[RMDB]
RNA sequence: GGGAACGACUCGAGUAGAGUCGAAAACGCCCCCGACGCUCGUGUUCGCUGGGCUCGUCAGCUCGCCGGGCCUGUCUCCGACCGCGUCCUCACGAAGGUACAGGAUUUCGCCCGUCUCGUCGCCUGCACUGCGUAAAGGUUUCGACCUUUACGCAGUAAAAGAAACAACAACAACAAC
Reactivity to DMS in 0.01 (KOAc 150mM, MgCl2 10mM, bicine 150mM(pH8.5), 24C), signal-to-noise 2, nucleotides 027 to 126: c150g010c030c010c010c080c020g000a080c080g010c050u000c070g010u020g000u000u000c080g000c060u000g020g000g020c040u000c060g020u020c060a150g020c050u000c050g000c090c040g010g010g000c030c020u010g000u010c020u000c050c040g000a110c070c050g000c060g020u000c030c050u010c050a080c070g000a080a100g010g020u000a080c100a090g030g000a160u000u010u000c090g030c010c010c020g010u010c040u000c020g000u000c060g020c010c010u000g020c100
Reactivity to 2A3 in 0.01 (KOAc 150mM, MgCl2 10mM, bicine 150mM(pH8.5), 24C), signal-to-noise 1, nucleotides 027 to 126: c060g050c010c010c000c010c010g030a060c020g010c050u050c040g090u100g000u210u090c020g000c060u070g040g010g000c050u040c040g050u020c010a030g040c000u050c030g040c000c010g010g020g050c000c020u040g060u000c020u000c010c000g090a090c010c020g010c020g020u050c000c000u010c020a050c050g070a120a030g030g010u120a090c030a060g010g060a030u030u070u050c040g000c030c000c000g070u050c020u000c030g070u000c030g010c060c000u000g020c020